[RMDB]
RNA sequence: GGGAACGACUCGAGUAGAGUCGAAAAGGCUAUUUUGCUGUUCGGAGGUGAAUAUCGUAGUCUUUUGGCUACGCUCUUUUGAGCGGUACAGGAUCACCUCCAACUGUACCGAUAGCAUAUAGCCGAAGGGUGGCAGCUUCUUCGGAAGCUGUUACCCAAAAGAAACAACAACAACAAC
Reactivity to 2A3 in 0.01 (KOAc 150mM, MgCl2 10mM, bicine 150mM(pH8.5), 24C), signal-to-noise 9, nucleotides 027 to 126: g000g000c000u000a010u030u300u040u020g000c010u010g050u080u050c040g020g010a020g020g020u050g050a120a050u150a080u300c020g000u010a000g010u000c020u060u290u170u300g000g000c000u000a010c000g000c010u030c010u020u160u070u200g040a020g020c000g000g000u040a020c020a030g070g040a070u100c030a030c030c010u000c000c000a000a010c020u030g020u020a020c000c030g040a050u080a010g000c000a000u000a000u000a010g000c000c000g000a040a020
Reactivity to DMS in 0.01 (KOAc 150mM, MgCl2 10mM, bicine 150mM(pH8.5), 24C), signal-to-noise 5, nucleotides 027 to 126: g000g020c000u000a000u010u020u010u000g040c000u000g030u010u000c060g030g000a010g010g000u010g020a110a100u040a080u050c020g010u000a020g000u000c010u020u040u020u070g000g000c000u000a010c010g000c050u000c010u010u010u010u020g000a040g010c020g010g010u010a040c100a060g000g020a130u020c070a070c040c020u010c020c030a040a030c060u010g000u010a030c070c020g000a080u030a010g010c000a020u000a010u000a010g010c000c010g000a070a110